[RMDB]
RNA sequence: GGGAACGACUCGAGUAGAGUCGAAAACCGGACCACUACCGCAUCUCGGUCAAGCGCGAGGGCGGCGGGCUGGUGUCGGAGUACCUGCACGGCGCGGUGCAGGAGGGCGACGAACUGCUCGUUCACGUCUCAAUAAAGCGUUCGCGCUUUAUUGAGAAAAAGAAACAACAACAACAAC
Reactivity to DMS in 0.01 (KOAc 150mM, MgCl2 10mM, bicine 150mM(pH8.5), 24C), signal-to-noise 5, nucleotides 027 to 126: c010c000g020g010a040c020c030a060c060u010a100c030c010g000c020a050u020c020u000c010g010g010u000c130a140a150g020c230g000c010g000a020g000g010g000c020g000g010c040g000g000g010c150u010g020g020u000g000u010c030g000g000a190g010u010a080c010c000u000g010c010a020c000g010g000c130g020c110g010g010u000g000c010a010g020g000a070g000g010g000c020g010a090c030g000a110a070c020u000g000c120u000c010g010u000u010c030a080c120g000
Reactivity to 2A3 in 0.01 (KOAc 150mM, MgCl2 10mM, bicine 150mM(pH8.5), 24C), signal-to-noise 5, nucleotides 027 to 126: c000c000g000g020a020c000c010a020c040u090a030c000c010g020c050a230u070c020u010c020g150g060u130c150a190a050g110c100g000c000g100a020g010g030g010c030g000g000c050g030g040g000c120u040g020g010u040g180u070c010g010g010a050g040u060a110c000c010u010g010c000a010c010g140g080c120g130c130g170g000u010g000c010a000g000g010a010g030g070g020c010g000a010c010g020a090a040c030u040g010c020u020c020g020u060u030c070a070c100g090